[RMDB]
Structure probing data (2A3 and DMS) for a 207-nucleotide construct. DMS (dimethyl sulfate) methylates the pairing face of unpaired adenines and cytosines. 2A3 adducts were read by reverse transcription with SuperScript II with manganese. It was measured as part of the RMDB library OK3TST. DMS adducts were read by reverse transcription with MarathonRT.
RNA sequence: GGGAACGACUCGAGUAGAGUCGAAAAAGGCAUGGUGGUUCGUGCUUGUACUUCCAACUACCCAGGAGGCUGAGCUAGGGAGGAUUGCUUAAACCUAGCAGUUAGAGGUUGCAGUGAGCUGUGAUCAUGCCACUGCACUCCAGCCUGGAAAACACAAGUCAUUUAUGGCUUUCGAGCCAUAAAUGACAAAAGAAACAACAACAACAAC
Reactivity to 2A3 in 0.01 (KOAc 150mM, MgCl2 10mM, bicine 150mM(pH8.5), 24C), signal-to-noise 2, nucleotides 027 to 156: a000g040g000c020a030u030g000g070u040g010g040u110u150c020g020u050g040c030u070u030g100u040a080c010u040u030c020c020a050a120c030u120a050c050c000c000a000g130g040a020g050g000c000u000g000a010g030c010u010a000g000g020g000a060g070g070a260u080u130g030c060u110u140a070a030a040c000c000u020a000g000c020a040g000u080u180a010g000a030g030g090u130u080g000c020a000g000u000g050a060g070c000u020g010u100g120a200u260c090a030u160g000c000c000a000c010u000g000c020a000c000u000c000c000a000g000c020c000u050g000g000a050a150a030a000c190a020c040a140a000
Reactivity to DMS in 0.01 (KOAc 150mM, MgCl2 10mM, bicine 150mM(pH8.5), 24C), signal-to-noise 1, nucleotides 027 to 156: a030g040g010c010a030u040g010g010u000g030g080u000u020c030g050u010g070c050u000u000g010u000a100c130u010u000c050c020a160a120c050u000a080c000c000c030a300g000g030a080g020g030c000u000g000a080g030c030u010a100g000g030g010a120g080g000a160u010u000g000c020u000u050a100a120a170c030c000u000a040g010c020a110g060u000u010a080g000a060g000g000u000u000g070c000a000g000u010g000a180g080c030u000g000u010g020a260u010c160a230u010g020c030c000a030c000u000g000c000a060c020u000c020c000a020g010c010c000u040g000g000a040a020a070a100c100a040c030a100a300